[RMDB]
RNA sequence: GGGAACGACUCGAGUAGAGUCGAAAACGUGAACUAUGGUCGCUCAGGUGAAACAGUAGGCGCAAUUGUACCGCUUGAUGGACAGGAGCCCUACGGAACUAUAACAAUCCAACUCCGCAGACGCGGGGACGGGUGAGGGAUUCGUCCCUCACCCGUCAAAAGAAACAACAACAACAAC
Reactivity to 2A3 in 0.01 (KOAc 150mM, MgCl2 10mM, bicine 150mM(pH8.5), 24C), signal-to-noise 1, nucleotides 027 to 126: c030g050u050g050a030a030c020u070a150u130g100g020u030c020g000c010u000c020a010g040g040u030g060a110a070a090c070a080g030u010a000g010g020c110g000c010a010a000u030u000g070u070a300c010c000g030c170u150u170g190a130u230g060g010a000c010a000g030g000a010g030c000c000c000u000a010c000g000g020a010a010c000u030a020u100a210a020c040a010a030u000c020c000a020a030c030u010c040c010g090c020a030g040a300c130g010c010g040g010g110
Reactivity to DMS in 0.01 (KOAc 150mM, MgCl2 10mM, bicine 150mM(pH8.5), 24C), signal-to-noise 1, nucleotides 027 to 126: c120g060u010g010a080a100c110u000a050u000g010g000u000c070g000c040u010c070a090g010g030u000g000a180a040a040c070a080g030u000a000g010g060c090g000c010a030a200u020u000g000u010a060c030c000g020c240u020u000g000a060u000g000g010a030c040a040g000g000a300g000c010c000c000u000a030c040g000g010a070a130c120u040a110u020a070a120c070a120a100u010c060c040a040a170c140u000c000c010g030c020a120g000a050c150g060c030g000g020g000
Chemical mapping of a 177-nucleotide RNA with 2A3 and DMS. Reactivities are rounded to 0.1 and cut off at 0 and 3. Conditions: 150 mM KOAc, 10 mM MgCl2 and 150 mM bicine (pH 8.5), 24 C. The data come from the RNA Mapping Database (RMDB), library OK2TST.